Structure probing data (DMS and 2A3) for a 170-nucleotide construct. Reactivities are rounded to 0.1 and cut off at 0 and 3. For DMS, 18,124 sequencing reads were counted. The RNA was probed in 150 mM KOAc, 10 mM MgCl2 and 150 mM bicine (pH 8.5) at 24 C.
[RMDB]
RNA sequence: GGGAACGACUCGAGUAGAGUCGAAAAUGCUCGAGGAUCUCCUCCCUCCCCUUCGAGGAUUCCCCUGCGACGGGUAGGCUCAUCCUGAGACCGGGGAGCUUCGAAGAUCUCUCUAUUCUCCAGAAAGCUAGCUUUCGGUUCGCCGAAAGCAAAAGAAACAACAACAACAAC
Reactivity to DMS in 0.01 (KOAc 150mM, MgCl2 10mM, bicine 150mM(pH8.5), 24C), signal-to-noise 3, nucleotides 027 to 129: u030g000c000u030c030g020a060g020g000a190u050c080u020c020c060u000c050c000c000u020c000c020c000c040u040u010c030g060a080g020g030a000u000u000c000c000c000c000u030g030c000g050a300c040g020g020g060u040a100g000g000c080u000c080a120u050c030c000u060g020a200g030a210c090c060g020g010g050g010a030g000c030u000u070c030g030a000a000g040a020u030c040u050c040u000c050u050a000u090u000c020u060c040c030a000g040a060a080a070g040c100u050a060
Reactivity to 2A3 in 0.01 (KOAc 150mM, MgCl2 10mM, bicine 150mM(pH8.5), 24C), signal-to-noise 9, nucleotides 027 to 129: u040g000c000u000c010g000a020g030g030a100u010c000u010c010c000u020c000c000c010u020c000c000c000c000u000u010c000g020a020g010g050a200u070u050c010c010c010c000u040g020c010g080a110c040g030g000g010u040a070g100g020c040u040c050a100u060c010c000u030g030a060g040a100c020c040g000g000g000g000a000g010c000u000u000c000g020a020a020g020a040u010c040u000c000u000c010u050a110u160u060c030u020c040c010a020g140a050a090a030g090c080u100a030